[RMDB]
RNA sequence: GGGAACGACUCGAGUAGAGUCGAAAAGGUUGAUGUACAACCACCUGUUUGAUUCCUUGUAUAAGGAUGUUGGGUACAUAGAUAUAGGGGGGGAUUUGCGAUACCACAUUAAUAACGGUCAUGGGGACCACGUGUCAUGCUUCGGCAUGACACGUGGAAAAGAAACAACAACAACAAC
Reactivity to DMS in 0.01 (KOAc 150mM, MgCl2 10mM, bicine 150mM(pH8.5), 24C), signal-to-noise 1, nucleotides 027 to 126: g000g010u000u010g020a100u020g010u020a140c130a090a060c000c060a140c060c030u010g010u020u020u000g010a160u000u020c030c000u010u010g010u000a070u010a070a020g030g000a070u000g000u030u010g000g000g000u000a060c090a110u000a020g000a080u010a090u070a180g000g000g040g000g000g000g000a300u000u000u000g000c080g000a080u000a050c080c000a070c110a170u000u000a040a020u000a070a100c130g000g000u000c040a100u000g000g000g000g000a240

This 177-nucleotide RNA was probed chemically with DMS. DMS adducts were read by reverse transcription with MarathonRT.